[RMDB]
RNA sequence: GGGAACGACUCGAGUAGAGUCGAAAAAACGCCCGCCUAAGGGGCUGGCAACGCAUAUCACUAAACUCAAUCACAACAACUGUAACCACCGCGGCUCAAUGGGACUGGAAACGCCACGCGUUGACAGACCUCAUCUAAGAUUCGUCUUAGAUGAGGUAAAAGAAACAACAACAACAAC
Reactivity to 2A3 in 0.01 (KOAc 150mM, MgCl2 10mM, bicine 150mM(pH8.5), 24C), signal-to-noise 5, nucleotides 027 to 126: a000a010c090g070c010c010c020g000c020c030u140a170a060g180g000g050g040c040u010g040g030c020a030a050c040g010c060a040u050a030u170c040a030c090u120a070a140a040c040u070c050a030a100u090c030a050c010a130a050c010a040a040c070u070g020u120a040a020c020c010a020c010c040g020c020g020g000c010u010c030a020a100u100g030g020g030a030c010u010g030g020a060a040a010c010g020c030c020a050c090g020c020g010u010u020g030a010c010a010g050
Reactivity to DMS in 0.01 (KOAc 150mM, MgCl2 10mM, bicine 150mM(pH8.5), 24C), signal-to-noise 5, nucleotides 027 to 126: a140a130c260g000c020c010c080g050c070c050u010a140a090g020g020g010g020c030u000g000g000c040a090a050c090g010c050a070u000a050u010c050a060c070u000a060a060a060c060u000c050a050a070u010c050a060c070a070a050c090a050a060c080u010g000u010a060a080c060c040a040c070c050g010c070g010g020c040u010c050a050a090u000g000g010g000a110c030u000g010g000a070a040a050c080g010c020c090a060c150g010c030g020u000u000g010a100c060a090g000